[RMDB]
RNA sequence: GGGAACGACUCGAGUAGAGUCGAAAAGCUCCACGAGUAGGAAUGUCUGAAAGUGCAUUCUGAAUGGGUGAUAAGAUUCAUCCAAGGCUAAAUAUAAGUUAGGAGAUCGAUAGCAUACAAGUACCGUCAGACUUCCCUAGUUCGCUAGGGAAGUCUGAAAAGAAACAACAACAACAAC
Reactivity to 2A3 in 0.01 (KOAc 150mM, MgCl2 10mM, bicine 150mM(pH8.5), 24C), signal-to-noise 3, nucleotides 027 to 126: g050c010u010c020c000a130c020g050a030g010u020a000g010g000a000a000u010g040u030c060u060g040a260a090a030g160u140g120c000a000u010u010c000u000g030a050a020u120g000g010g000u030g000a030u040a070a050g110a060u020u000c030a040u000c070c010a040a100g020g000c050u120a020a090a070u210a070u040a170a110g020u030u010a000g000g010a010g000a000u060c040g090a120u020a110g000c020a020u090a190c030a100a060g020u030a050c010c010g040u000
Chemical mapping of a 177-nucleotide RNA with 2A3. 2A3 is a SHAPE reagent: it acylates the 2'-hydroxyl of flexible nucleotides of all four kinds. It was measured as part of the RMDB library RFM100.